[RMDB]
RNA sequence: GGGAACGACUCGAGUAGAGUCGAAAAACGUCGCCGGCGAAUGUACGCAUACGCCGGCGACGAAGGCCUUCUGGUGAUGUUUCUGGCCACCCAGGAGGUCUUGAGGAAGAGGUGGACGGCCAGACAAAAAAGUCUUCUAACUUCGGUUAGAAGACAACAUGCAUAUACGGUUCGCCGUAUAUGCAUGAAAAGAAACAACAACAACAAC
Reactivity to 2A3 in 0.01 (KOAc 150mM, MgCl2 10mM, bicine 150mM(pH8.5), 24C), signal-to-noise 2, nucleotides 027 to 156: a000c020g000u000c010g000c030c010g050g000c020g040a090a020u020g030u080a030c240g000c090a030u100a060c000g000c050c000g000g070c010g010a000c000g000a000a000g000g000c010c000u020u020c000u010g000g000u070g100a170u060g090u060u210u080c010u010g010g000c010c000a000c000c000c010a010g000g000a010g000g000u040c030u040u090g020a020g030g040a050a040g020a030g030g060u120g060g040a080c050g000g020c010c000a000g010a000c060a010a130a010a010a010a000g000u010c000u000u020c000u010a000a000c000u040u050c140g030g010u000u000a000g020a000a000g000a000c000a010a000
Source information
Source: RMDB library M2RFPK, as collected in RNAgym. Chemical mapping of a 207-nucleotide RNA with 2A3. The reactions ran in a buffer of 150 mM KOAc, 10 mM MgCl2 and 150 mM bicine (pH 8.5), at 24 C.